[RMDB]
RNA sequence: GGGAACGACUCGAGUAGAGUCGAAAAACACAGAACCACUAAGCAUGCUUAGGAAUUGUGACGCCAUAAAAGCAGCCUUACGUUCUGAGACGAAUGAUCCCCGUCUUAUGAGCAGUAUCCUUGAUAAGGACCUGAUACGAUUCGUCGUAUCAGGUCCAAAAGAAACAACAACAACAAC
Reactivity to 2A3 in 0.01 (KOAc 150mM, MgCl2 10mM, bicine 150mM(pH8.5), 24C), signal-to-noise 3, nucleotides 027 to 126: a000c050a010c000a010g080a040a020c000c000a040c070u030a020a000g010c070a170u210g020c010u000u030a040g020g100a080a040u210u150g020u070g040a030c180g020c020c010a060u150a040a180a000a010g040c020a020g000c000c000u150u100a070c120g020u010u000c000u000g030a020g020a020c000g050a010a050u060g010a010u060c000c000c000c000g000u000c000u010u100a140u090g040a000g000c020a010g050u070a060u080c000c010u070u010g060a090u110a140a090
Reactivity to DMS in 0.01 (KOAc 150mM, MgCl2 10mM, bicine 150mM(pH8.5), 24C), signal-to-noise 1, nucleotides 027 to 126: a060c150a090c090a000g020a080a040c240c000a020c130u000a000a000g010c020a090u040g000c000u050u000a060g000g000a040a090u000u010g000u070g000a210c060g010c040c000a210u000a090a130a030a110g020c000a030g030c180c000u000u000a030c210g000u010u000c050u000g000a040g000a250c020g000a020a130u050g000a060u020c000c070c050c000g030u000c000u010u000a010u000g000a120g070c080a140g000u130a000u000c050c080u000u010g020a020u020a050a010
Record summary:
An RNA of 177 nucleotides, treated with 2A3 and DMS and read out base by base. Reactivities are rounded to 0.1 and cut off at 0 and 3. Source: RMDB library OK1LIB, as collected in RNAgym. The 2A3 profile rests on 1,480 reads. Values cover nucleotides 27 to 126.